The record gives the reactivity of an RNA of 177 nucleotides to DMS. For DMS the reverse transcriptase was MarathonRT. The RNA was probed in 150 mM KOAc, 10 mM MgCl2 and 150 mM bicine (pH 8.5) at 24 C.

RNA sequence: GGGAACGACUCGAGUAGAGUCGAAAACAUACAUGGUCCCAUUGGAUUGUUAACAGCUGAAGGUAGUGGAUAUGUUUGUUUUGCUGACAUACGACAGUUGGAGUGUAUCGCAGAGGAACAGGGGCUGCGAUCCCACUCCGUUCGCGGAGUGGGAUCGAAAAGAAACAACAACAACAAC
Reactivity to DMS in 0.01 (KOAc 150mM, MgCl2 10mM, bicine 150mM(pH8.5), 24C), signal-to-noise 2, nucleotides 027 to 126: c070a040u000a050c090a090u000g020g010u000c000c000c080a240u010u010g000g000a100u010u000g030u070u000a120a150c300a200g050c120u050g010a100a030g000g010u000a060g090u000g010g000a080u070a030u010g010u000u000u000g000u000u000u000u040g030c000u020g000a060c050a050u000a000c050g000a240c180a020g000u030u010g000g040a020g000u000g000u010a090u000c010g030c110a000g000a020g000g000a120a070c040a090g060g070g000g050c050u000g000